The record gives the reactivity of an RNA of 177 nucleotides to 2A3 and DMS. For 2A3, 1,341 sequencing reads were counted.
[RMDB]
RNA sequence: GGGAACGACUCGAGUAGAGUCGAAAACAAUAUCCGCGAUUGUACCUUGUUUUAAAAAUCGACUUACCGUCGUUAAUCGGUUAUUUAACGAAAUCAUUUUAUUCUCCUUUAUGAAAAAAGAGGUUGAAGAGUCUAAAGGAUUCGUCCUUUAGACUCUAAAAGAAACAACAACAACAAC
Reactivity to 2A3 in 0.01 (KOAc 150mM, MgCl2 10mM, bicine 150mM(pH8.5), 24C), signal-to-noise 2, nucleotides 027 to 126: c020a050a050u040a050u200c030c010g050c050g090a060u030u120g050u080a060c010c000u100u120g110u100u110u080u160a080a140a020a030a050u030c000g000a020c000u030u060a040c060c010g080u050c000g000u060u060a040a050u090c010g040g010u060u110a070u040u070u020a060a010c020g050a040a000a030u090c030a040u070u120u040u140a150u190u080c010u040c050c010u030u090u040a090u180g110a020a150a050a000a000a000g030a000g000g000u070u000g020a040
Reactivity to DMS in 0.01 (KOAc 150mM, MgCl2 10mM, bicine 150mM(pH8.5), 24C), signal-to-noise 2, nucleotides 027 to 126: c080a070a080u000a050u010c040c030g040c070g010a080u000u000g020u000a090c080c070u000u000g000u000u030u000u000a030a060a050a100a080u000c030g000a050c070u000u000a160c040c060g000u000c040g010u000u000a030a020u010c020g020g010u000u010a040u000u010u000a020a020c030g000a170a060a080u030c100a030u010u000u020u000a100u020u000c020u000c020c020u000u000u000a110u000g000a020a060a060a060a090a070g000a020g000g000u000u000g020a090
The RNA was probed in 150 mM KOAc, 10 mM MgCl2 and 150 mM bicine (pH 8.5) at 24 C.
The DMS profile rests on 1,996 reads.
DMS adducts were read by reverse transcription with MarathonRT.
High DMS reactivity at an A or C suggests that its Watson-Crick edge is free.